About this RNA:
Chemical mapping of a 207-nucleotide RNA with 2A3. It was measured as part of the RMDB library VIROID. The reactions ran in a buffer of 150 mM KOAc, 10 mM MgCl2 and 150 mM bicine (pH 8.5), at 24 C.
RNA sequence: GGGAACGACUCGAGUAGAGUCGAAAAAAACAACUGAAGCUCCCGAGAACCGCUUUUUCUCUAUCUAGCUGGUACCGGGGCGAGGGUGUUUAGCCCUUGGAACCGCAGUUGGUUCCUCGGAACUAAACUCGUGGUUCCUGUGGCUCACACCUGACCUGACUUUUAACUUCUUCGGAAGUUAAAAGUCAAAAGAAACAACAACAACAAC
Reactivity to 2A3 in 0.01 (KOAc 150mM, MgCl2 10mM, bicine 150mM(pH8.5), 24C), signal-to-noise 1, nucleotides 027 to 156: a000a000a000c110a070a020c030u120g070a080a010g010c050u140c160c020c070g060a170g000a060a010c000c030g090c020u010u030u050u100u150c190u090c030u100a200u180c070u080a010g050c060u080g070g010u060a150c010c000g000g010g000g010c000g010a070g040g000g000u000g010u040u100u090a000g010c000c000c000u010u020g000g000a000a000c000c000g030c000a000g000u010u010g000g000u000u010c000c000u000c160g030g000a000a010c000u130a270a010a000c000u040c230g000u020g010g020u000u000c000c000u000g020u130g020g000c000u030c050a000c000a020c000c000u000g020a000c000c020u110